[RMDB]
Structure probing data (DMS and 2A3) for a 177-nucleotide construct.
The DMS profile rests on 1,662 reads.
The 2A3 profile rests on 1,673 reads.
Values cover nucleotides 27 to 126.
RNA sequence: GGGAACGACUCGAGUAGAGUCGAAAAGAAAAUAAGCGUGCGUUUUGGUGCGAGUGAAGUGCCGAUAAGCAUACGAAGUGUGCGAAAGAUAAGACACUCCGCGAUAAGCGAAACGCAAAAAGAAAAAGGCUAUGAAAUACUUCGGUAUUUCAUAGCCAAAAGAAACAACAACAACAAC
Reactivity to DMS in 0.01 (KOAc 150mM, MgCl2 10mM, bicine 150mM(pH8.5), 24C), signal-to-noise 1, nucleotides 027 to 126: g010a030a070a060a030u000a130a140g020c110g020u000g030c010g000u000u000u000u010g020g020u040g010c090g000a000g000u000g000a070a050g040u010g000c030c010g000a110u000a070a210g000c000a010u000a020c000g020a140a120g070u000g010u010g020c000g000a020a200a220g000a070u000a020a080g000a120c000a040c000u000c020c000g000c000g000a160u040a010a070g000c000g000a000a090a010c060g010c010a000a070a080a110a090g000a050a080a070a170a100
Reactivity to 2A3 in 0.01 (KOAc 150mM, MgCl2 10mM, bicine 150mM(pH8.5), 24C), signal-to-noise 2, nucleotides 027 to 126: g060a010a020a030a090u280a040a020g040c030g020u020g000c020g000u000u000u090u090g180g040u170g040c100g000a020g020u040g050a180a050g040u020g200c000c000g000a050u020a110a010g000c000a000u030a020c030g130a230a030g010u010g000u000g050c030g010a060a060a040g040a080u120a180a020g010a040c000a000c000u000c010c000g020c000g080a100u050a090a000g000c010g030a220a080a030c000g000c000a060a000a000a120a000g210a000a060a000a000a000
For DMS the reverse transcriptase was MarathonRT. The reactions ran in a buffer of 150 mM KOAc, 10 mM MgCl2 and 150 mM bicine (pH 8.5), at 24 C. For 2A3 the reverse transcriptase was SuperScript II with manganese.